[RMDB]
RNA sequence: GGGAACGACUCGAGUAGAGUCGAAAAAGUGGUAUUUAAUAGCCUCUUAUCUCCUGAACACCUAGAUUUAAGAGGAGGCUCACCUGGACCUCCUUCCGCAGUAGAUGCAAUGGGUAGGGGCAAACUAUACGGGGUAAGAUUUCGAUCUUACCCCGUAAAAAGAAACAACAACAACAAC
Reactivity to DMS in 0.01 (KOAc 150mM, MgCl2 10mM, bicine 150mM(pH8.5), 24C), signal-to-noise 3, nucleotides 027 to 126: a060g030u010g000g000u010a030u010u040u030a100a140u020a170g020c000c000u000c010u030u030a050u020c060u040c010c040u010g000a300a190c070a030c030c010u010a030g010a130u010u020u030a220a150g000a040g000g000a030g010g010c120u010c030a050c160c240u000g050g020a240c020c040u000c010c000u000u030c090c050g000c240a040g000u010a020g020a040u000g000c030a040a060u010g000g000g020u020a040g000g010g000g010c040a050a090a120c140u000a080
Reactivity to 2A3 in 0.01 (KOAc 150mM, MgCl2 10mM, bicine 150mM(pH8.5), 24C), signal-to-noise 3, nucleotides 027 to 126: a010g180u140g030g020u230a270u110u180u090a200a250u140a040g000c000c000u020c030u070u080a030u060c060u020c000c030u040g150a170a000c030a040c030c010u040a100g060a300u020u110u250a110a050g050a010g010g000a000g000g010c000u010c000a200c060c050u090g030g000a090c010c010u000c000c010u020u140c020c040g010c010a000g010u090a030g010a170u000g060c090a110a060u120g030g090g000u000a040g000g000g000g000c000a000a070a000c070u060a010